[RMDB]
Chemical mapping of a 207-nucleotide RNA with 2A3. The 2A3 profile rests on 728 reads. For 2A3 the reverse transcriptase was SuperScript II with manganese. Values cover nucleotides 27 to 156.
RNA sequence: GGGAACGACUCGAGUAGAGUCGAAAAGCUGAGCUCCAGGAAAAAGAUGAACUUAAGUAUGCUAAGCCUCUGGCUUCUGCCGCACGAAAAGCAGUUCGUCACUUUGUGGUAACACUGAAGUAAUUUAUUGGAGAUUCACUGCCUUAGUGUGAGCUAAGUUCCAUAGCGUUUUCGAACGCUAUGGAACAAAAGAAACAACAACAACAAC
Reactivity to 2A3 in 0.01 (KOAc 150mM, MgCl2 10mM, bicine 150mM(pH8.5), 24C), signal-to-noise 2, nucleotides 027 to 156: g020c050u000g000a010g010c020u050c020c040a090g160g000a010a130a070a000a000g020a010u030g000a030a000c010u060u100a080a040g050u050a110u190g060c000u060a070a020g020c000c000u150c250u300g010g000c000u060u000c030u100g070c050c030g010c000a010c060g060a020a080a090a000g100c050a030g000u040u000c070g000u010c020a010c010u050u020u020g040u030g040g020u090a100a050c020a000c030u090g050a010a000g010u090a010a120u150u070u300a110u140u190g050g000a040g000a050u000u040c000a000c010u000g000c000c030u010u090a070g010u000g000u000g010a030g020c030u080a060a140